[RMDB]
Source: RMDB library M2RFPK, as collected in RNAgym. Structure probing data (2A3) for a 207-nucleotide construct. Values cover nucleotides 27 to 156. As a SHAPE reagent, 2A3 marks flexible, mostly unpaired nucleotides at the ribose 2'-OH.

RNA sequence: GGGAACGACUCGAGUAGAGUCGAAAAAUCUUUAAGCAGAUGGCAGGUUCACCCCGUACGGUGCGGAAGUUCACGCUUCCGUGAAACGCGAAAAUCGGACGGUGGCUGCAAGUCGCAUCGCAAAACCUAUAGCUUGUUAGGUUCGCCUAACAAGCAACAACGUUGGAACCUUCGGGUUCCAACGUUGAAAAGAAACAACAACAACAAC
Reactivity to 2A3 in 0.01 (KOAc 150mM, MgCl2 10mM, bicine 150mM(pH8.5), 24C), signal-to-noise 1, nucleotides 027 to 156: a000u140c070u020u110u020a050a020g020c030a000g020a030u050g010g020c000a060g000g060u070u140c000a030c000c000c000c000g000u030a000c010g000g000u030g020c000g000g000a000a000g030u110u160c060a030c120g060c000u030u050c000c030g000u000g050a070a080a050c120g000c010g190a010a040a060a100u070c000g000g010a030c120g000g080u090g010g000c000u010g030c050a010a030g060u040c070g000c030a010u050c010g030c090a020a020a070a190c030c020u190a100u050a190g000c000u000u000g000u000u000a000g000g030u010u000c150g070c090c000u000a000a000c000a000a000g000c000a000a000